Structure probing data (2A3 and DMS) for a 177-nucleotide construct. The 2A3 profile rests on 803 reads. 2A3 adducts were read by reverse transcription with SuperScript II with manganese.
[RMDB]
RNA sequence: GGGAACGACUCGAGUAGAGUCGAAAAGUGAGGGUAUUGAGGUGGAGGUAGCUCUGACAUCUAAUAUGAUGCAGGGAGGAAAACUAAUGUGUUUUUGGGAUUCUCUCAGUAGUAGUAAAAGAAGGUCUACCCAAGCAUUGUUCGCAAUGCUUGGGUAAAAAGAAACAACAACAACAAC
Reactivity to 2A3 in 0.01 (KOAc 150mM, MgCl2 10mM, bicine 150mM(pH8.5), 24C), signal-to-noise 1, nucleotides 027 to 126: g060u050g000a110g040g000g040u060a030u060u110g060a080g000g090u110g060g040a070g030g040u070a010g000c000u020c020u110g050a130c010a020u000c040u150a260a240u060a220u300g050a010u020g000c000a000g000g000g000a060g000g010a010a040a000a000c020u070a040a300u180g070u010g090u190u020u010u030u060g010g000g000a060u110u110c050u000c000u020c070a010g050u040a010g000u050a020g020u070a030a060a050a060g000a020a000g050g000u050c050
Reactivity to DMS in 0.01 (KOAc 150mM, MgCl2 10mM, bicine 150mM(pH8.5), 24C), signal-to-noise 2, nucleotides 027 to 126: g010u000g010a090g020g010g000u010a140u000u000g000a110g010g010u020g000g030a100g020g010u020a120g000c020u000c010u000g010a150c000a020u000c010u000a050a160u000a100u000g020a040u000g000c010a050g010g030g000a050g000g000a030a020a050a050c030u000a090a060u010g010u010g000u000u000u000u000u000g000g010g000a170u000u000c030u000c020u000c040a050g000u000a060g030u010a090g010u000a040a020a140a070g020a080a090g000g000u010c140
The data come from the RNA Mapping Database (RMDB), library OK2TRN.